[RMDB]
RNA sequence: GGGAACGACUCGAGUAGAGUCGAAAACAGUAUUGUUGUAUUACAACAAUACAACAAGGUAUCACUGCAUCGGCAGUUGACAGUUGGUGUCAGUGCCAUCAUGCCGUGGCACGCUACGGCCCACCGGACUAUGGCAUCCUUUCGAGGAUGCCAUAGUAAAAGAAACAACAACAACAAC
Reactivity to 2A3 in 0.01 (KOAc 150mM, MgCl2 10mM, bicine 150mM(pH8.5), 24C), signal-to-noise 9, nucleotides 027 to 126: c030a010g050u050a030u010u000g040u010u000g050u110a150u270u300a110c030a070a000c010a020a010u020a000c010a000a020c050a060a030g070g010u080a020u160c010a010c020u020g010c020a050u110c070g090g000c020a070g050u070u070g060a050c030a030g050u160u140g150g130u080g070u100c020a030g010u000g020c000c000a070u130c040a020u080g020c010c020g010u010g000g000c040a010c080g050c030u080a030c020g030g000c000c010c000a030c020c030g050g010
Reactivity to DMS in 0.01 (KOAc 150mM, MgCl2 10mM, bicine 150mM(pH8.5), 24C), signal-to-noise 3, nucleotides 027 to 126: c100a110g000u010a010u000u000g000u000u000g000u000a090u010u030a110c130a020a070c060a010a000u000a000c000a100a100c210a120a070g000g020u010a070u050c030a020c010u010g000c040a050u000c150g000g010c010a020g000u030u000g000a010c080a070g020u000u030g020g020u020g040u020c010a060g000u000g020c000c020a010u020c180a040u000g010c050c060g000u000g000g010c080a020c040g000c060u030a060c160g000g000c010c030c040a080c090c100g020g030